Structure probing data (DMS and 2A3) for a 207-nucleotide construct. The reactions ran in a buffer of 150 mM KOAc, 10 mM MgCl2 and 150 mM bicine (pH 8.5), at 24 C. The data come from the RNA Mapping Database (RMDB), library OK3TST.

RNA sequence: GGGAACGACUCGAGUAGAGUCGAAAAUCGAGAGUACGAACUCUCACACGUGUGAGUUCGAGUGAACGAGAACUCGUUCACGAGUGUGUACGUUCGUACGAGAGAGAUCACACUCGAUCACGAUCACUCGAGUUCUCGAGAACGAGUACUCACGUGAAAUAUCAUAUUUGUUCGCAAAUAUGAUAUUAAAAGAAACAACAACAACAAC
Reactivity to DMS in 0.01 (KOAc 150mM, MgCl2 10mM, bicine 150mM(pH8.5), 24C), signal-to-noise 9, nucleotides 027 to 156: u000c040g000a040g020a060g040u000a090c110g010a080a080c020u000c070u000c010a170c050a040c060g020u000g020u000g000a070g010u000u000c020g020a300g020u000g010a220a250c060g010a130g010a080a060c040u000c000g010u000u000c020a150c010g010a040g010u000g020u000g020u000a070c050g020u000u000c020g000u000a190c110g010a150g010a300g010a080g000a170u000c040a050c030a040c010u000c000g000a120u000c070a190c080g010a170u010c050a080c060u000c020g000a040g010u000u000c020u000c020g010a140g010a270a090c030g010a230g010u000a050c020u000c010a060c040g010u000g000a080
Reactivity to 2A3 in 0.01 (KOAc 150mM, MgCl2 10mM, bicine 150mM(pH8.5), 24C), signal-to-noise 9, nucleotides 027 to 156: u180c040g000a000g000a010g010u070a150c150g070a260a080c040u000c000u010c010a030c000a000c020g110u120g020u030g060a030g010u030u040c010g010a020g010u030g030a070a030c010g000a010g000a020a000c010u040c010g010u100u070c080a040c070g000a010g000u010g000u000g010u060a080c070g100u090u080c040g030u120a110c120g000a010g000a000g000a000g000a060u080c000a010c000a010c010u010c010g060a120u140c090a040c190g070a090u150c060a040c140u040c010g000a000g000u010u000c000u000c000g030a080g040a020a010c010g000a010g010u010a010c000u010c010a010c010g010u020g010a030